[RMDB]
Chemical mapping of a 177-nucleotide RNA with 2A3 and DMS. The 2A3 profile rests on 1,162 reads. 2A3 adducts were read by reverse transcription with SuperScript II with manganese. The data come from the RNA Mapping Database (RMDB), library OK2TST.

RNA sequence: GGGAACGACUCGAGUAGAGUCGAAAAACGGCAGUUGCUGGGCAUAACGCAGCUCAUGAAGCAUUCCUGUCCGGUAUGAGCGAGUUUGAUAUCAAUCUGGCCUAUCUGAUGGCUACAGGUCAGCGUGUACGAGGCAUAAUUUCGAUUAUGCCUCGUAAAAAGAAACAACAACAACAAC
Reactivity to 2A3 in 0.01 (KOAc 150mM, MgCl2 10mM, bicine 150mM(pH8.5), 24C), signal-to-noise 2, nucleotides 027 to 126: a000c000g060g000c010a040g020u140u050g030c010u030g030g030g040c050a090u100a150a060c090g010c110a000g000c000u000c030a030u080g160a130a020g000c000a000u150u000c000c010u080g070u000c030c020g040g000u120a060u110g050a080g020c040g000a020g030u040u090u050g130a130u090a010u110c070a090a000u010c010u030g040g010c050c000u030a080u060c080u150g140a120u070g030g000c020u080a030c040a060g000g040u020c020a000g000c040g050u060g070
Reactivity to DMS in 0.01 (KOAc 150mM, MgCl2 10mM, bicine 150mM(pH8.5), 24C), signal-to-noise 4, nucleotides 027 to 126: a110c070g000g000c050a070g020u010u000g020c030u000g000g010g010c050a070u010a090a090c100g030c110a180g010c030u010c030a070u010g010a140a110g010c060a110u000u000c090c050u000g030u000c030c020g000g020u010a030u000g000a070g020c020g010a060g020u000u000u000g010a120u000a080u020c080a080a090u000c010u000g000g010c020c010u000a080u000c090u000g010a090u010g000g010c060u000a040c070a030g000g010u000c060a050g010c190g020u020g010